An RNA of 177 nucleotides, treated with 2A3 and DMS and read out base by base. For 2A3 the reverse transcriptase was SuperScript II with manganese. The 2A3 profile rests on 4,256 reads. DMS adducts were read by reverse transcription with MarathonRT.

RNA sequence: GGGAACGACUCGAGUAGAGUCGAAAAAUCGGAGAGGACAUCGAAACGCCGGUCUGGCGCGAUAUCGAUGCAGGCACGGUAGAGACGAACUAUCAGCGGUUUGCCCGUGCGGUCGCUGAUGGAACGACUACUAAUCGUGGUUCGCCACGAUUAGUAGAAAAGAAACAACAACAACAAC
Reactivity to 2A3 in 0.01 (KOAc 150mM, MgCl2 10mM, bicine 150mM(pH8.5), 24C), signal-to-noise 1, nucleotides 027 to 126: a010u070c040g030g000a070g010a030g080g040a050c010a050u020c020g020a070a030a020c040g000c010c000g090g240u090c140u170g060g000c020g000c030g060a020u050a040u190c030g020a010u020g020c030a020g100g000c030a000c120g020g040u040a050g020a000g000a110c030g010a040a010c010u010a010u010c010a000g000c000g010g120u060u230u300g040c070c050c050g070u300g040c020g010g010u050c010g000c000u000g000a000u000g000g010a040a000c010g030a040
Reactivity to DMS in 0.01 (KOAc 150mM, MgCl2 10mM, bicine 150mM(pH8.5), 24C), signal-to-noise 4, nucleotides 027 to 126: a060u000c030g020g020a140g000a100g000g010a130c030a030u000c010g010a060a170a110c030g000c010c010g030g020u000c150u020g010g020c030g030c050g000a100u010a050u000c020g000a030u000g000c070a080g000g030c070a060c030g010g000u000a070g010a120g000a150c020g010a020a220c030u000a030u000c030a010g010c010g000g010u000u000u010g040c010c100c200g020u010g010c020g000g010u000c010g010c010u010g010a010u000g010g000a050a230c050g000a300